[RMDB]
RNA sequence: GGGAACGACUCGAGUAGAGUCGAAAAGAAGAUAAGAGACGAGACACCGUGGGCAGAUGACAAGAAAGUCCGUCGGUGUCGGUAAGGUCGUCAGUCACAGGCGACCGUUUUCUGUGACUGUAAAGAAGGUACGACCUAUGUUCGCAUAGGUCGUACCAAAAGAAACAACAACAACAAC
Reactivity to DMS in 0.01 (KOAc 150mM, MgCl2 10mM, bicine 150mM(pH8.5), 24C), signal-to-noise 3, nucleotides 027 to 126: g030a170a130g000a090u030a080a020g030a080g000a100c040g050a090g030a040c000a010c000c000g030u000g000g000g000c000a080g000a220u040g030a230c300a140a040g000a090a100a110g000u000c010c000g030u010c000g040g000u000g030u000c000g000g020u020a030a070g000g000u000c040g020u040c000a000g000u010c040a050c040a050g020g010c180g030a210c070c150g010u010u020u030u000c000u020g000u000g000a030c000u020g000u010a000a070a030g000a120a080
Reactivity to 2A3 in 0.01 (KOAc 150mM, MgCl2 10mM, bicine 150mM(pH8.5), 24C), signal-to-noise 2, nucleotides 027 to 126: g230a100a000g040a040u170a040a110g160a000g010a000c020g010a030g000a030c000a000c000c000g010u040g000g000g000c020a010g060a160u140g040a140c070a150a040g110a130a110a000g000u000c080c000g110u130c020g030g000u000g000u000c000g000g010u030a010a000g180g040u020c000g020u060c020a020g020u000c000a000c000a020g000g000c040g020a050c000c030g000u090u000u030u030c000u000g000u000g010a000c000u000g090u090a040a030a150g220a160a000